This 177-nucleotide RNA was probed chemically with 2A3 and DMS. For 2A3, 1,173 sequencing reads were counted. Conditions: 150 mM KOAc, 10 mM MgCl2 and 150 mM bicine (pH 8.5), 24 C. Values cover nucleotides 27 to 126. The DMS profile rests on 4,802 reads.

RNA sequence: GGGAACGACUCGAGUAGAGUCGAAAAGAAGCAAUCUGUGCAGCAAUGAUUGAAGCAUGGGGCUAUCCUGAAUUGCUCCAGGAGAUUAGGAAAUUUUAUUUGUGGCUGCUUGAGAGAGAUGAACUAACGUGAUAGCAUUGUUCGCAAUGCUAUCACGAAAAGAAACAACAACAACAAC
Reactivity to 2A3 in 0.01 (KOAc 150mM, MgCl2 10mM, bicine 150mM(pH8.5), 24C), signal-to-noise 3, nucleotides 027 to 126: g070a030a000g020c030a000a040u030c020u110g150u240g090c040a010g030c030a000a160u190g060a140u130u100g020a110a040g070c050a020u050g000g000g000g000c000u070a100u120c000c110u080g020a150a030u100u030g000c000u000c000c000a010g020g080a160g000a060u120u190a050g000g090a050a130a140u080u070u070u150a180u070u220u080g180u030g160g080c000u010g000c000u120u140g010a050g000a000g010a000g010a040u050g060a050a070c020u020a010a050
Reactivity to DMS in 0.01 (KOAc 150mM, MgCl2 10mM, bicine 150mM(pH8.5), 24C), signal-to-noise 3, nucleotides 027 to 126: g020a140a090g020c020a080a060u000c000u010g010u010g010c030a000g000c010a100a050u000g010a060u000u020g010a090a100g000c060a170u020g010g010g010g010c000u000a070u000c020c100u010g000a110a090u030u020g000c040u000c030c010a030g000g000a120g010a140u020u050a120g020g000a030a110a100u010u000u010u010a050u010u000u020g010u010g000g000c010u000g000c020u000u030g010a070g000a070g010a120g000a060u000g010a070a110c100u000a020a160